This 207-nucleotide RNA was probed chemically with DMS and 2A3. Conditions: 150 mM KOAc, 10 mM MgCl2 and 150 mM bicine (pH 8.5), 24 C. The 2A3 profile rests on 1,360 reads. For DMS the reverse transcriptase was MarathonRT. 2A3 adducts were read by reverse transcription with SuperScript II with manganese.
RNA sequence: GGGAACGACUCGAGUAGAGUCGAAAAGCUUAAUAACCUGCGUUGAGCCCUUCUCCCCCAGCUUGCCUGUGUCCUAGGGAAUUGGAAGGUCAUCCUUCACAGGAUCGUGUGGAAGUCCUGCUCGGGGUCCAAACAUGGUAAUUCGUUACCAUGUUAAAUAAUUGAACUGUUUCGACAGUUCAAUUAUAAAAGAAACAACAACAACAAC
Reactivity to DMS in 0.01 (KOAc 150mM, MgCl2 10mM, bicine 150mM(pH8.5), 24C), signal-to-noise 3, nucleotides 027 to 156: g020c020u000u000a070a070u000a060a110c030c020u010g020c080g020u000u000g010a080g020c000c010c040u000u010c090u000c040c000c000c030c020a110g020c040u000u000g040c030c030u040g010u000g010u010c060c030u000a090g010g000g010a070a130u020u000g010g020a080a080g010g010u000c060a080u000c040c020u010u000c080a090c070a030g000g010a040u010c040g040u010g010u000g010g010a090a090g010u000c030c020u000g010c030u000c060g040g010g050g010u000c040c060a130a020a010c010a000u000g020g020u000a010a100u000u000c230g000u000u000a000c000c000a020u000g010u000u000a020a050
Reactivity to 2A3 in 0.01 (KOAc 150mM, MgCl2 10mM, bicine 150mM(pH8.5), 24C), signal-to-noise 2, nucleotides 027 to 156: g010c020u080u090a060a030u070a120a200c020c030u040g080c030g070u000u040g030a010g010c000c020c050u130u020c050u120c020c000c080c010c000a000g010c040u060u070g010c010c010u090g000u020g010u080c000c040u080a050g020g010g100a050a100u080u070g040g050a090a070g040g010u050c030a060u110c010c000u040u020c010a030c010a040g020g030a070u070c050g020u090g010u050g100g000a030a030g030u010c010c000u010g020c010u010c050g010g000g010g010u050c050c030a050a010a000c010a010u000g000g000u030a040a020u050u060c120g060u070u010a000c000c000a000u000g000u000u000a000a000